[RMDB]
RNA sequence: GGGAACGACUCGAGUAGAGUCGAAAAGAUAUGGACCAUUUCUCCUUUUGACGUCGUAGCAUUCGGAAACGAAUGAUACGACGAUAAGGAGAAUGGUCCUAAGUCAAACCAGUCCUUCGGGACUGGACGUAAGGUCACGCUUCGGCGUGACCUUACGAAAAGAAACAACAACAACAAC
Reactivity to 2A3 in 0.01 (KOAc 150mM, MgCl2 10mM, bicine 150mM(pH8.5), 24C), signal-to-noise 1, nucleotides 027 to 126: g050a030u060a080u140g000g010a010c000c020a010u210u300u000c000u090c020c020u000u200u110u270g300a200c100g010u000c000g010u060a000g050c010a000u010u010c050g030g000a080a080a000c010g020a000a000u040g010a030u010a010c070g000a010c000g000a000u010a020a030g030g010a000g000a000a010u000g000g020u050c000c000u010a000a020g040u010c030a040a000a150c010c000a000g010u040c030c000u140u300c300g070g000g000a020c030u010g030g000a020
Conditions: 150 mM KOAc, 10 mM MgCl2 and 150 mM bicine (pH 8.5), 24 C. The record gives the reactivity of an RNA of 177 nucleotides to 2A3.